About this RNA
Source: RMDB library M2PK90, as collected in RNAgym. Chemical mapping of a 177-nucleotide RNA with DMS and 2A3. The reactions ran in a buffer of 150 mM KOAc, 10 mM MgCl2 and 150 mM bicine (pH 8.5), at 24 C.
RNA sequence: GGGAACGACUCGAGUAGAGUCGAAAAGUGUCGGACUCGCAAGUGCGAAUAUAUUUUAUCCCUAAACAGGGAGUGGAAAGCACGUCCUGGAGUGGUAAACACGUCCAUCCCAAAGCGAGAAAUGAAACUACGGAAAAACUUUCGAGUUUUUCCGUAGAAAAGAAACAACAACAACAAC
Reactivity to DMS in 0.01 (KOAc 150mM, MgCl2 10mM, bicine 150mM(pH8.5), 24C), signal-to-noise 3, nucleotides 027 to 126: g060u010g010u010c050g000g010a160c010u000c010g000c020a140a130g020u010g000c000g010a060a120u010a070u020a110u000u020u020u000a100u010c000c010c010u000a070a090a120c240a020g000g010g010a000g020u010g020g000a080a080a160g000c000a000c000g010u000c050c020u000g000g000a140g000u000g000g000u000a100a110a090c040a030c060g000u010c020c020a050u000c000c000c010a020a050a100g000c020g000a030g000a090a110a090u000g010a080a220a070
Reactivity to 2A3 in 0.01 (KOAc 150mM, MgCl2 10mM, bicine 150mM(pH8.5), 24C), signal-to-noise 2, nucleotides 027 to 126: g050u050g060u030c020g020g020a020c000u010c000g010c030a090a060g020u000g030c020g120a180a010u100a010u000a040u080u170u090u080a080u050c020c000c000u160a290a280a050c050a070g020g020g010a000g000u040g020g120a050a110a050g010c000a010c010g140u130c020c000u030g000g000a010g060u030g030g040u160a090a170a000c020a010c080g170u000c000c000a050u070c000c000c000a000a030a030g000c010g000a080g070a100a110a000u100g050a080a080a030